An RNA of 177 nucleotides, treated with DMS and 2A3 and read out base by base.

RNA sequence: GGGAACGACUCGAGUAGAGUCGAAAAUGAAAUAAAGUGUACCAAAUGGUAGGUACACACCAAGUGUGCGGUGGUCGCACACAACCAGCAGUCAAUAGAGACUGGAAAACCUAACCAAAGAAAAAAAGUAAGAGAGUAGAUUCGUCUACUCUCUUACAAAAGAAACAACAACAACAAC
Reactivity to DMS in 0.01 (KOAc 150mM, MgCl2 10mM, bicine 150mM(pH8.5), 24C), signal-to-noise 3, nucleotides 027 to 126: u010g000a070a060a120u010a030a040a120g020u000g000u000a010c030c000a060a080a160u010g000g000u010a080g020g000u000a000c000a010c010a140c170c100a080a160g010u000g010u000g000c000g020g040u010g010g010u020c010g000c000a000c010a010c010a080a050c120c070a110g010c010a020g020u020c020a080a130u000a130g000a130g020a030c000u000g020g000a030a100a090a100c060c050u000a050a080c060c040a050a080a130g020a010a030a040a050a040a120a130
Reactivity to 2A3 in 0.01 (KOAc 150mM, MgCl2 10mM, bicine 150mM(pH8.5), 24C), signal-to-noise 3, nucleotides 027 to 126: u050g010a030a050a000u160a060a060a020g000u000g000u010a010c010c000a050a090a130u170g120g030u090a100g000g010u010a000c000a000c000a000c010c010a070a070g000u000g000u000g000c020g010g120u160g090g140u230c010g000c000a000c000a000c000a000a070c020c010a000g060c020a010g020u020c000a000a040u090a260g160a000g010a090c010u050g030g000a040a110a020a020c020c030u040a020a030c030c030a060a070a000g170a060a120a040a050a000a010a000
The reactions ran in a buffer of 150 mM KOAc, 10 mM MgCl2 and 150 mM bicine (pH 8.5), at 24 C.